[RMDB]
RNA sequence: GGGAACGACUCGAGUAGAGUCGAAAAGUUAAGUUUCCAUGAGCUCACUCUUUAUUCUUUUCCUCGUUUUCUUAUACCUAGUAUGUUUUCUGACGCUUUUUGAAGUGACAGAAAAAAGGAGUUUAAAGAAGUAUCCCAAGUUCGCUUGGGAUACUUCAAAAGAAACAACAACAACAAC
Reactivity to 2A3 in 0.01 (KOAc 150mM, MgCl2 10mM, bicine 150mM(pH8.5), 24C), signal-to-noise 3, nucleotides 027 to 126: g040u050u060a060a070g020u010u020u010c030c030a110u120g050a000g040c020u020c040a040c000u020c010u000u110u060a050u110u050c010u020u080u040u020c000c000u080c040g030u000u010u070u070c050u020u060a110u070a200c000c010u010a050g110u090a080u150g080u080u000u020u000c010u000g030a040c000g030c020u000u080u020u060u170g220a000a000g000u000g020a010c000a000g000a000a000a000a010a000a000g070g030a060g020u080u090u040a050a050a020
Reactivity to DMS in 0.01 (KOAc 150mM, MgCl2 10mM, bicine 150mM(pH8.5), 24C), signal-to-noise 1, nucleotides 027 to 126: g000u010u010a010a180g020u040u000u000c000c120a180u020g000a090g040c000u000c080a010c030u000c000u000u030u000a050u070u000c000u010u000u010u000c030c010u000c060g070u030u010u000u000c010u000u000a130u020a040c020c010u010a120g000u030a100u010g000u000u000u020u000c000u000g050a060c000g010c000u000u000u010u080u050g010a010a040g040u000g010a040c000a040g000a000a000a000a070a020a030g020g000a230g030u000u000u030a000a230a280
Structure probing data (2A3 and DMS) for a 177-nucleotide construct. It was measured as part of the RMDB library RFM100.